[RMDB]
The record gives the reactivity of an RNA of 177 nucleotides to DMS and 2A3.
RNA sequence: GGGAACGACUCGAGUAGAGUCGAAAAGGAUGUGGCUUAAUUCGAGGCAACGCGAAGAACCUUAUCCCGGAUUUGACAUCUACGGAUUAGCUCUGUGAAAGCAAAGUGACGCCUUCGGGUGGAACGUUAUAUCAGUUUUAUUCGUAAAACUGAUAUAAAAAGAAACAACAACAACAAC
Reactivity to DMS in 0.01 (KOAc 150mM, MgCl2 10mM, bicine 150mM(pH8.5), 24C), signal-to-noise 9, nucleotides 027 to 126: g000g010a040u010g010u010g000g000c050u010u000a080a130u010u000c040g010a090g000g010c150a070a110c060g010c030g010a050a050g000a080a130c040c020u000u010a070u000c020c010c030g010g010a180u010u010u010g000a080c070a060u000c020u000a070c190g000g000a040u000u010a220g000c030u000c030u000g010u010g010a090a070a120g000c060a020a050a050g010u000g000a160c190g000c010c010u010u020c120g000g010g020u000g000g000a070a070c070g000u010
Reactivity to 2A3 in 0.01 (KOAc 150mM, MgCl2 10mM, bicine 150mM(pH8.5), 24C), signal-to-noise 9, nucleotides 027 to 126: g070g010a050u080g020u070g080g010c030u070u100a080a030u150u070c040g030a040g060g010c050a070a030c040g000c020g060a060a060g030a070a050c020c000u040u050a040u040c000c000c000g010g040a070u080u050u110g070a040c060a100u010c020u030a020c050g040g000a030u070u100a020g010c010u000c020u020g060u030g110a110a030a010g030c040a030a020a040g030u040g020a020c060g010c000c000u040u060c110g040g000g010u020g000g020a040a020c020g010u010
Conditions: 150 mM KOAc, 10 mM MgCl2 and 150 mM bicine (pH 8.5), 24 C.
For 2A3 the reverse transcriptase was SuperScript II with manganese.
Source: RMDB libraries RFM100 and RFMREP, as collected in RNAgym.